[RMDB]
RNA sequence: GGGAACGACUCGAGUAGAGUCGAAAAAUUAACCCAGCCUAAAUGAAGAGCAGGACAAAAGGUUCGUCUGCAAACACUCCAUGGUAGACAGAGGAUGGGGAAAUGGAUGUGGACUAUUAGGAAGUAAUAGAAUUGACGUAUUCGUACGUCAAUUCUAAAAAGAAACAACAACAACAAC
Reactivity to 2A3 in 0.01 (KOAc 150mM, MgCl2 10mM, bicine 150mM(pH8.5), 24C), signal-to-noise 2, nucleotides 027 to 126: a000u080u030a020a060c000c000c030a010g040c010c010u050a090a100a070u130g030a040a070g030a040g120c030a030g070g000a030c070a030a200a010a010g100g000u090u080c010g010u020c030u000g050c030a040a070a000c000a010c010u070c020c000a030u050g090g070u090a050g050a090c050a010g160a010g060g050a050u010g020g010g000g030a070a080a000u030g030g000a010u040g000u020g020g050a000c010u050a120u090u020a050g000g050a080a020g060u130a090a110
Reactivity to DMS in 0.01 (KOAc 150mM, MgCl2 10mM, bicine 150mM(pH8.5), 24C), signal-to-noise 3, nucleotides 027 to 126: a080u000u000a130a120c000c000c000a210g020c040c030u010a020a070a080u000g020a090a040g020a100g000c050a010g000g000a050c120a060a060a100a150g000g020u000u000c100g020u000c020u010g010c050a070a060a150c040a070c030u010c010c020a040u010g000g000u020a070g010a080c090a050g000a080g000g000a130u000g020g020g010g000a060a060a050u000g000g000a090u000g020u010g000g000a080c060u000a060u010u010a020g000g000a030a050g000u010a050a080
Structure probing data (2A3 and DMS) for a 177-nucleotide construct. 2A3 adducts were read by reverse transcription with SuperScript II with manganese. It was measured as part of the RMDB library M2PK90.